[RMDB]
Source: RMDB library TTRINS, as collected in RNAgym. An RNA of 177 nucleotides, treated with 2A3 and DMS and read out base by base. The DMS profile rests on 3,630 reads. 2A3 adducts were read by reverse transcription with SuperScript II with manganese. The reactions ran in a buffer of 150 mM KOAc, 10 mM MgCl2 and 150 mM bicine (pH 8.5), at 24 C. The 2A3 profile rests on 3,474 reads.
RNA sequence: GGGAACGACUCGAGUAGAGUCGAAAAGAUAUGGAUUUGCUACCCACCCGUGUGACACCGAAGAACAUUGGCACGUCGGAAACGACGUGCCAAUGGGAGGUGUCGACACGGAGGCAAAUCCUAAGUCGUAUUAUAAUAACUUCGGUUAUUAUAAUACAAAAGAAACAACAACAACAAC
Reactivity to 2A3 in 0.01 (KOAc 150mM, MgCl2 10mM, bicine 150mM(pH8.5), 24C), signal-to-noise 1, nucleotides 027 to 126: g130a080u250a300u300g000g020a020u000u020u000g030c030u120a300c000c010c020a010c010c010c010g000u020g010u020g000a000c000a000c030c040g120a170a030g040a100a010c000a000u000u020g020g000c000a000c000g050u000c000g040g040a040a080a050c040g000a000c040g000u030g070c000c000a000a000u000g000g000g000a000g000g000u000g000u000c010g010a000c000a000c000g000g010a000g040g000c000a010a000a010u030c000c000u010a090a000g280u210c070
Reactivity to DMS in 0.01 (KOAc 150mM, MgCl2 10mM, bicine 150mM(pH8.5), 24C), signal-to-noise 3, nucleotides 027 to 126: g000a200u020a140u000g010g000a010u010u000u010g020c010u000a150c020c000c030a300c080c000c000g030u020g010u000g000a000c010a000c000c000g010a140a120g010a100a140c000a010u010u000g000g020c010a010c000g030u000c020g020g000a070a080a240c030g030a010c000g050u000g000c000c000a000a000u000g000g000g010a050g000g030u000g000u000c020g000a010c010a010c010g000g000a020g010g000c000a010a010a010u000c000c000u000a030a110g010u010c180